[RMDB]
RNA sequence: GGGAACGACUCGAGUAGAGUCGAAAAGGGGUCGCAUAAGACAGGGAUCAAAAUGCGUUCCGUAGAGUGGUCUUUUGACGUUCUGAAGCCUCCACGGAACGAUAAGACCACUCUACGGAACGCAUUUCGAUCCCAAUGACGUGCGACGGAGGCACCCGCAAGUUAAUUAGUUCGCUAAUUAACUUGCAAAAGAAACAACAACAACAAC
Reactivity to DMS in 0.01 (KOAc 150mM, MgCl2 10mM, bicine 150mM(pH8.5), 24C), signal-to-noise 1, nucleotides 027 to 156: g000g010g000g040u000c000g080c020a030u000a080a130g010a240c040a210g000g020g000a020u030c000a010a010a010a010u000g030c070g000u000u010c000c000g060u020a010g000a030g030u000g000g000u000c020u000u000u010u000g020a230c060g000u000u000c000u000g000a050a130g020c080c050u020c040c050a300c040g010g000a030a020c030g010a040u000a030a030g000a030c020c000a030c010u000c000u000a000c000g000g000a000a000c000g020c010a000u000u000u000c020g030a010u000c000c000c000a020a020u010g010a090c130g030u010g000c020g000a040c030g000g030a060g020g020c040a220c040c010c050
The record gives the reactivity of an RNA of 207 nucleotides to DMS. For DMS the reverse transcriptase was MarathonRT.